RNA sequence: GGGAACGACUCGAGUAGAGUCGAAAAGGGUUUCCGCCAUAUCUUGUUCCAAUUCUAGAAGCAUAUAAUGGACAAUCUGAUGCUGAAACAGUUCCACCGUGGCAAAAACGCCAAGCAUCACUAGGAAGACUAUCAGCGGCCCACAUCAUAAUAGUUCGACGGAACUAUUCUUCGGAAUAGUUCCGUCAAAAGAAACAACAACAACAAC
Reactivity to 2A3 in 0.01 (KOAc 150mM, MgCl2 10mM, bicine 150mM(pH8.5), 24C), signal-to-noise 1, nucleotides 027 to 156: g020g000g000u030u060u050c020c030g010c020c000a010u010a070u100c010u090u050g050u070u010c040c010a150a240u080u040c070u080a020g050a150a010g090c100a030u090a040u050a150a110u200g080g000a030c030a120a040u110c040u010g020a010u030g020c030u050g040a010a090a050c100a120g110u070u080c050c040a180c050c080g030u010g000g000c000a000a010a290a060a060c090g000c010c000a010a000g000c010a030u020c010a000c030u020a030g030g000a040a030g010a080c030u060a050u130c020a000g000c000g040g000c000c010c000a050c020a080u110c010a010u070a280a050u070a160g150u100u030c050